Chemical mapping of a 207-nucleotide RNA with 2A3. 2A3 adducts were read by reverse transcription with SuperScript II with manganese. The reactions ran in a buffer of 150 mM KOAc, 10 mM MgCl2 and 150 mM bicine (pH 8.5), at 24 C.

RNA sequence: GGGAACGACUCGAGUAGAGUCGAAAAUAGGAAACGACGGGUAUGAACUAGUCAAAGCUCCUGAAUCUGUCUUCAAAGCAUGGAUUAAUAGUCUGACUAAUGGUGAUCUGCUUACUUACUCGUCUUACGAUAGAACGCUCGAUAAGAUGAGGGAUAAGGACGGAUAAAGGUUCGCCUUUAUCCGUCCAAAAGAAACAACAACAACAAC
Reactivity to 2A3 in 0.01 (KOAc 150mM, MgCl2 10mM, bicine 150mM(pH8.5), 24C), signal-to-noise 2, nucleotides 027 to 156: u100a010g000g050a010a010a040c020g030a000c030g000g070g030u080a050u120g090a050a050c060u050a050g020u030c020a030a040a040g020c040u040c030c000u020g000a000a010u010c010u080g000u030c020u080u040c080a120a110a070g020c020a030u070g000g020a040u030u100a070a060u070a090g050u000c060u100g020a050c000u050a150a050u070g020g030u030g020a050u030c020u090g030c010u010u070a070c020u090u030a030c000u000c000g000u010c000u000u000a000c010g000a000u050a210g170a190a020c030g000c080u010c010g200a200u000a020a000g000a000u000g000a030g000g060g010a070u090a060a090